Structure probing data (2A3 and DMS) for a 207-nucleotide construct. Conditions: 150 mM KOAc, 10 mM MgCl2 and 150 mM bicine (pH 8.5), 24 C. The 2A3 profile rests on 1,775 reads. Values cover nucleotides 27 to 156.
RNA sequence: GGGAACGACUCGAGUAGAGUCGAAAAGCUGUUCAUGUAGUCACGGUGCUCUCAGAAAAUAUAUUAACGCAGUCUUGUAGGCAGCUGCCACCUUAUGCAGUGCAUCGAAACCUUUUGCUUGGGGAUGUGCUUGGAGAGGCAGAUAACGCUGAAGCAGAACGUUUUCAACUUUCGAGUUGAAAACGUUAAAAGAAACAACAACAACAAC
Reactivity to 2A3 in 0.01 (KOAc 150mM, MgCl2 10mM, bicine 150mM(pH8.5), 24C), signal-to-noise 3, nucleotides 027 to 156: g050c040u040g020u110u080c090a080u110g050u100a040g040u070c060a020c060g020g050u050g000c000u010c000u040c060a040g170a040a080a090a000u200a030u080a060u140u200a130a070c080g000c040a030g010u050c030u110u140g010u070a030g040g000c010a020g010c000u000g000c010c040a100c050c010u110u100a090u210g040c020a000g020u010g030c010a020u040c010g100a120a150a170c000c000u060u130u100u200g060c060u050u050g000g000g010g000a010u040g020u010g020c020u010u010g020g030a050g010a070g050g000c020a000g000a060u090a130a020c080g010c040u030g010a010a000g030c040a020g030
Reactivity to DMS in 0.01 (KOAc 150mM, MgCl2 10mM, bicine 150mM(pH8.5), 24C), signal-to-noise 1, nucleotides 027 to 156: g000c060u000g010u000u020c070a030u000g040u000a080g020u010c030a080c060g010g070u010g000c030u000c070u000c030a140g010a100a040a060a140u000a140u000a130u010u000a060a100c050g010c000a100g000u020c030u000u020g040u000a060g020g040c030a100g020c030u020g060c010c010a050c040c040u000u000a130u000g030c070a020g010u000g000c040a050u000c020g030a110a030a170c010c060u000u000u000u000g040c070u000u010g050g000g000g040a090u000g000u000g020c010u030u000g000g000a130g000a160g010g020c010a060g000a020u000a070a070c090g020c070u000g020a120a130g010c060a090g020